The record gives the reactivity of an RNA of 177 nucleotides to DMS and 2A3. Source: RMDB library OK1LIB, as collected in RNAgym. The RNA was probed in 150 mM KOAc, 10 mM MgCl2 and 150 mM bicine (pH 8.5) at 24 C.
RNA sequence: GGGAACGACUCGAGUAGAGUCGAAAAAUUUAAAGGCCAGGACGGUCACCUUUGGGGUGGUGACAAGUGUGAUCACUUGGGUGGUGGCUGUGUUUGCGUGUCUCCCAGGAAUCUCGUUUACCAGAUCAAUGCUCACGUAUUUCGAUACGUGAGCAUUAAAAGAAACAACAACAACAAC
Reactivity to DMS in 0.01 (KOAc 150mM, MgCl2 10mM, bicine 150mM(pH8.5), 24C), signal-to-noise 2, nucleotides 027 to 126: a070u060u030u030a060a070a090g000g020c030c060a030g000g000a080c090g000g020u010c000a020c020c010u000u000u020g020g010g000g010u000g010g020u000g000a050c010a110a100g010u040g010u030g010a130u010c010a050c020u000u020g000g000g010u010g030g020u000g000g000c010u010g000u030g010u060u000u020g000c070g010u010g010u000c050u000c020c000c000a180g000g000a050a000u040c090u000c040g000u030u000u020a130c070c030a110g010a090u000c170
Reactivity to 2A3 in 0.01 (KOAc 150mM, MgCl2 10mM, bicine 150mM(pH8.5), 24C), signal-to-noise 2, nucleotides 027 to 126: a000u200u180u140a050a070a000g150g000c040c000a020g010g030a000c060g000g030u020c000a020c000c000u020u210u100g050g000g000g000u090g000g020u010g030a010c010a040a060g180u170g040u020g140a060u120c000a010c000u020u020g060g000g040u130g040g000u050g000g000c000u070g000u010g040u030u040u020g140c170g000u090g020u040c000u000c020c040c000a020g000g000a080a040u010c000u000c110g000u000u000u110a200c080c000a000g030a110u050c020